[RMDB]
RNA sequence: GGGAACGACUCGAGUAGAGUCGAAAAGCGUACUACAGCGGGAAAGUAGCUCGAGGAUCUAUGGCUAAUCUCUCCCAAAUAGGAGAGACAACCAUAGGGAGAGCUAUAACACGCUGUAUCGCAAACUUACUACAUCCGUUCGCGGAUGUAGUAAGAACGUAACCCGUGGUUUCGACCACGGGUUACGAAAAGAAACAACAACAACAAC
Reactivity to 2A3 in 0.01 (KOAc 150mM, MgCl2 10mM, bicine 150mM(pH8.5), 24C), signal-to-noise 1, nucleotides 027 to 156: g000c000g010u020a010c040u000a000c010a000g000c020g000g010g040a160a140a100g060u000a000g000c010u000c000g050a280g070g000a020u030c010u000a000u000g030g000c010u060a080a290u010c000u000c000u000c000c050c050a140a300a210u300a080g000g000a000g000a000g000a000c010a020a020c000c000a010u000a020g000g000g000a000g000a000g050c000u000a030u090a010a000c030a020c000g020c000u030g000u000a000u070c000g000c000a000a000a100c010u000u000a000c000u000a000c000a000u010c020c000g070u030u080c240g000c010g180g000a000u000g000u000a000g000u000a000a000g000a000a000